[RMDB]
RNA sequence: GGGAACGACUCGAGUAGAGUCGAAAAGGAUUCCAGCCUGUGAUCUCAACUGAGAAACCCCGUCCUGCUUGGAUGAUGCAGGUAUGUGGACUUGCUGGAAAACAGGUCCUCAUACCCUAACUGCGGAAACCGGUCGAGGCCCGGAAGGGAGCAGACUCUAACUACAGACGUUCGCGUCUGUAGUUAGAAAAGAAACAACAACAACAAC
Reactivity to 2A3 in 0.01 (KOAc 150mM, MgCl2 10mM, bicine 150mM(pH8.5), 24C), signal-to-noise 2, nucleotides 027 to 156: g020g020a110u100u030c030c000a020g010c040c020u110g050u140g130a150u030c030u020c070a090a250c100u130g000a070g090a180a090a050c030c000c010c020g000u010c010c020u060g140c080u120u180g020g060a050u040g020a020u140g030c000a010g030g000u020a000u000g000u010g000g000a000c000u000u030g050c060u110g070g000a010a020a020a050c000a010g000g000u010c010c000u010c000a030u030a030c020c000c020u060a110a070c010u060g000c000g060g000a090a060a080c030c000g000g050u040c030g100a120g070g040c050c010c010g060g030a040a010g050g000g020a030g040c020a010g030a060c020u000
Chemical mapping of a 207-nucleotide RNA with 2A3. Source: RMDB library ARCHII, as collected in RNAgym. Values are in units of 0.01, from 0 to 300, in steps of 10. Conditions: 150 mM KOAc, 10 mM MgCl2 and 150 mM bicine (pH 8.5), 24 C. For 2A3 the reverse transcriptase was SuperScript II with manganese.